[RMDB]
RNA sequence: GGGAACGACUCGAGUAGAGUCGAAAAGUCACUCAAUUCGUUGAGUGACAUACUGGGCCCGGAGUCGCGCAUGAAAGGGUCAAGACGCGCUCGAUAAAUUAACUAGUUGCCAGUUCGCUGGCAACAAGUCAUCUUUCGUGUUCGCACGAAAGAUGACAAAAGAAACAACAACAACAAC
Reactivity to DMS in 0.01 (KOAc 150mM, MgCl2 10mM, bicine 150mM(pH8.5), 24C), signal-to-noise 1, nucleotides 027 to 126: g000u010c000a000c000u000c000a000a030u000u040c160g010u010u000g000a020g030u000g000a010c000a010u040a010c110u010g050g000g000c040c000c000g000g000a120g030u000c010g010c040g020c050a130u010g000a010a140a110g040g010g000u000c020a140a080g000a190c000g000c010g000c030u000c010g000a120u010a090a000a120u010u010a080a170c140u010a110g040u000u000g010c010c000a060g030u000u010c300g030c010u000g000g010c000a000a000c010a040a020
Reactivity to 2A3 in 0.01 (KOAc 150mM, MgCl2 10mM, bicine 150mM(pH8.5), 24C), signal-to-noise 2, nucleotides 027 to 126: g020u010c000a000c000u010c000a000a060u070u030c180g060u040u000g000a010g020u000g000a000c000a000u040a000c000u030g020g010g020c020c020c000g000g000a040g040u140c040g010c020g000c150a000u190g140a100a070a130g160g020g030u030c010a000a010g050a050c010g010c000g000c010u000c010g070a130u110a200a130a070u250u140a050a060c050u040a080g000u010u000g000c020c010a000g020u020u010c220g000c050u000g000g000c000a000a000c000a000a000